[RMDB]
RNA sequence: GGGAACGACUCGAGUAGAGUCGAAAAGAAGGCCGUAGUAAAGAAAAGGGUGAGCGUUUAAUUAAUUUAACUCCAGCUCCGUAGUUAAGCGCUCACCUGGAGCUGGAGGCGUAUUAUGGCCGAGAAAGGCAUAACAUUACUUCGGUAAUGUUAUGCCAAAAGAAACAACAACAACAAC
Reactivity to 2A3 in 0.01 (KOAc 150mM, MgCl2 10mM, bicine 150mM(pH8.5), 24C), signal-to-noise 3, nucleotides 027 to 126: g060a020a090g000g000c040c010g020u010a000g020u020a000a110a110g080a050a070a030a020g010g000g000u000g000a000g010c000g020u050u150u220a050a050u110u070a020a070u060u080u120a060a060c010u000c000c000a000g010c010u030c000c020g000u070a100g060u080u220a100a040g040c020g000c000u000c000a000c000c010u010g000g000a000g000c000u000g000g000a010g030g020c040g030u000a010u010u000a000u000g000g000c010c000g010a000g040a000a030a000
Reactivity to DMS in 0.01 (KOAc 150mM, MgCl2 10mM, bicine 150mM(pH8.5), 24C), signal-to-noise 2, nucleotides 027 to 126: g020a110a150g000g000c000c000g010u010a030g010u000a010a050a160g010a090a080a050a110g000g000g030u020g010a010g000c000g000u020u010u020a110a100u020u050a010a110u010u040u020a040a090c040u000c030c000a050g000c020u030c010c080g000u020a080g000u010u030a040a090g000c040g000c010u010c000a000c000c010u010g000g000a040g000c010u000g000g010a140g000g020c160g000u000a010u000u000a000u010g000g020c000c010g000a140g010a030a150a050
About this RNA:
This 177-nucleotide RNA was probed chemically with 2A3 and DMS. For 2A3 the reverse transcriptase was SuperScript II with manganese. Values cover nucleotides 27 to 126. The RNA was probed in 150 mM KOAc, 10 mM MgCl2 and 150 mM bicine (pH 8.5) at 24 C.